An RNA of 177 nucleotides, treated with DMS and read out base by base. Reactivities are given for positions 27 through 126. The reactions ran in a buffer of 150 mM KOAc, 10 mM MgCl2 and 150 mM bicine (pH 8.5), at 24 C. It was measured as part of the RMDB library OK2TST.
RNA sequence: GGGAACGACUCGAGUAGAGUCGAAAAGUGAAUUGCAGGCCGCCGAAGAAGCCGUUGCCGGUGUUGAUAGCCCAGUUGCCGCCGGCUUCGCAUCCUGCGAGGCGAUCCCAGUCGGAAUCUGGUGCUGAUCCUAUGCUCCGUUCGCGGAGCAUAGGAUAAAAGAAACAACAACAACAAC
Reactivity to DMS in 0.01 (KOAc 150mM, MgCl2 10mM, bicine 150mM(pH8.5), 24C), signal-to-noise 1, nucleotides 027 to 126: g010u000g010a060a080u000u000g010c020a040g020g000c160c080g010c060c170g000a060a150g010a080a100g030c040c030g020u010u000g020c050c010g030g030u000g000u000u000g020a070u000a080g000c020c020c010a060g000u000u010g010c070c030g000c020c030g000g000c020u000u000c010g000c100a060u000c050c030u000g010c020g000a030g000g000c040g000a060u000c020c020c000a160g010u000c050g010g010a080a060u010c000u000g000g000u010g010c040u000g020